[RMDB]
RNA sequence: GGGAACGACUCGAGUAGAGUCGAAAAACGUCCGGCGCAACAGUUAGAAGUGAUCUCCACCGGCUUAUUAGCGAUAGGGAUUAUCUGUACCGUGCCAAUUAUGGCUCGCUGGAAAAAGCUGGUAUUGCCCAGGUAUCGGAUUCGUCCGAUACCUGGGAAAAGAAACAACAACAACAAC
Reactivity to DMS in 0.01 (KOAc 150mM, MgCl2 10mM, bicine 150mM(pH8.5), 24C), signal-to-noise 1, nucleotides 027 to 126: a140c150g010u000c000c000g000g000c050g030c040a030a080c150a040g000u000u000a050g000a190a150g000u010g000a010u010c000u000c000c100a080c000c020g000g000c020u040u000a140u040u000a010g000c000g020a000u030a150g000g010g020a030u050u000a020u000c200u020g030u030a160c000c000g000u080g030c030c040a050a110u140u040a090u000g020g040c020u000c010g080c000u140g000g000a000a000a020a060a060g000c040u000g000g000u000a080u000u020g050
Reactivity to 2A3 in 0.01 (KOAc 150mM, MgCl2 10mM, bicine 150mM(pH8.5), 24C), signal-to-noise 4, nucleotides 027 to 126: a000c040g090u030c050c020g080g000c040g040c030a060a110c000a100g030u220u240a060g050a190a030g070u070g080a100u040c000u030c070c020a010c000c000g000g000c030u080u070a140u020u090a140g000c000g070a080u110a110g100g030g030a070u090u090a170u230c120u150g050u080a130c000c010g040u050g020c000c000a060a060u300u190a160u250g000g000c000u020c010g040c020u000g020g000a110a040a000a010a000g000c000u020g040g000u080a180u110u300g080

Chemical mapping of a 177-nucleotide RNA with DMS and 2A3. For 2A3, 1,388 sequencing reads were counted. It was measured as part of the RMDB library OK1LIB. For 2A3 the reverse transcriptase was SuperScript II with manganese. The DMS profile rests on 1,188 reads. The RNA was probed in 150 mM KOAc, 10 mM MgCl2 and 150 mM bicine (pH 8.5) at 24 C.